[RMDB]
RNA sequence: GGGAACGACUCGAGUAGAGUCGAAAAAUACCAGGUUUACCAGUAUGAAUUGCAAUGUUGAUACGGUUUGCAGCACGUUCAAUCUCUACGUGAGAAACUGAUGCUUCUUUUAAUUCAUUAUCAAUAACUGAUAAUAAAGUUUCGACUUUAUUAUCAGAAAAGAAACAACAACAACAAC
Reactivity to 2A3 in 0.01 (KOAc 150mM, MgCl2 10mM, bicine 150mM(pH8.5), 24C), signal-to-noise 4, nucleotides 027 to 126: a000u110a020c010c010a010g050g040u020u080u070a060c020c010a020g050u060a060u080g050a040a030u030u060g020c060a050a050u170g030u050u050g040a050u020a060c010g020g050u040u020u070g020c070a040g060c010a010c030g010u100u080c040a140a170u050c060u030c060u140a040c070g070u060g030a040g040a050a050a010c020u030g010a070u110g020c000u000u000c010u050u130u030u060a060a050u040u110c010a020u050u140a110u180c010a020a060u170a180a060
Reactivity to DMS in 0.01 (KOAc 150mM, MgCl2 10mM, bicine 150mM(pH8.5), 24C), signal-to-noise 5, nucleotides 027 to 126: a090u000a120c040c030a120g010g010u000u010u000a090c090c050a100g020u010a040u000g000a040a040u010u010g000c100a060a170u000g010u000u000g000a090u010a110c180g010g010u010u000u000g020c090a080g000c030a030c060g010u000u000c090a090a100u000c090u000c050u000a030c070g030u000g010a090g000a040a030a040c060u000g000a080u000g000c040u000u000c010u000u000u010u000a030a090u000u000c030a030u000u000a090u000c040a070a070u010a050a220